[RMDB]
RNA sequence: GGGAACGACUCGAGUAGAGUCGAAAACCUGUUGACUUCGGUCAACAGGAAAAGGUGGAUGCUACGCAACCGAAGUAGCAAAAGUGCAGAAGGAACGCACAAAAACUUAUCCGUUCGCGGAUAAGAAUCAUUAACCUGAGUUCGCUCAGGUUAAUGAAAAAGAAACAACAACAACAAC
Reactivity to DMS in 0.01 (KOAc 150mM, MgCl2 10mM, bicine 150mM(pH8.5), 24C), signal-to-noise 3, nucleotides 027 to 126: c000c010u010g020u000u000g020a000c000u000u030c170g020g010u010c000a020a020c010a000g010g000a010a030a070a140g010g010u010g000g010a190u000g000c010u020a000c010g000c130a110a150c090c050g000a060a170g010u000a010g030c020a050a050a050a100g010u000g000c010a100g000a090a090g020g000a150a140c130g000c030a030c050a050a060a050a070a160c010u000u000a000u000c000c000g030u010u010c200g000c000g000g010a000u000a010a000g010a100a100
Reactivity to 2A3 in 0.01 (KOAc 150mM, MgCl2 10mM, bicine 150mM(pH8.5), 24C), signal-to-noise 2, nucleotides 027 to 126: c000c020u000g000u000u000g020a010c000u020u030c210g100g000u010c010a000a000c000a020g020g060a020a060a000a000g120g030u150g030g070a080u080g020c000u030a000c030g020c070a110a030c030c050g150a110a010g010u000a020g000c000a000a000a090a000g000u000g000c000a010g060a210a050g200g080a120a050c050g040c010a000c040a010a030a020a030a080c000u010u010a010u000c000c020g000u010u050c270g000c010g090g000a000u000a000a000g020a000a070
Chemical mapping of a 177-nucleotide RNA with DMS and 2A3.
Conditions: 150 mM KOAc, 10 mM MgCl2 and 150 mM bicine (pH 8.5), 24 C.
2A3 adducts were read by reverse transcription with SuperScript II with manganese.
It was measured as part of the RMDB library M2PK50.
High 2A3 reactivity points to a flexible backbone, as in loops and unpaired stretches.
The DMS profile rests on 2,536 reads.